[RMDB]
RNA sequence: GGGAACGACUCGAGUAGAGUCGAAAAGGAACUAUGUUCAGGCAUGAAGCCUCCACGUGCGUGCGAAAGCACCCGGAAACGGCUGAGCAUAGUUCCGAGCUGAAGGAGGCACGGCUCAAAAUAAAAAGGUGCUACAACUGUUCGCAGUUGUAGUACCAAAAGAAACAACAACAACAAC
Reactivity to DMS in 0.01 (KOAc 150mM, MgCl2 10mM, bicine 150mM(pH8.5), 24C), signal-to-noise 3, nucleotides 027 to 126: g010g000a000a000c000u000a000u000g010u000u000c000a010g000g000c000a010u000g010a100a130g000c000c000u010c000c000a300c000g000u000g020c040g050u000g010c000g030a110a040a080g010c000a010c010c000c020g010g000a090a080a090c010g000g000c000u010g000a010g000c030a030u000a000g000u000u000c000c000g000a000g010c010u000g000a070a070g030g020a020g000g000c000a300c040g000g000c000u000c000a100a090a120a070u050a050a100a080a180a070
Reactivity to 2A3 in 0.01 (KOAc 150mM, MgCl2 10mM, bicine 150mM(pH8.5), 24C), signal-to-noise 4, nucleotides 027 to 126: g000g000a000a000c000u000a000u010g000u000u000c000a000g000g000c000a000u010g040a090a020g000c000c000u000c000c000a040c000g010u000g010c000g000u000g010c000g040a070a010a010g000c000a000c000c000c000g000g020a030a050a020c010g000g000c000u000g000a000g000c000a000u000a000g000u000u000c000c000g000a000g000c000u030g020a130a050g000g000a000g000g010c030a020c010g000g000c000u000c000a090a090a010a010u300a040a080a020a020a020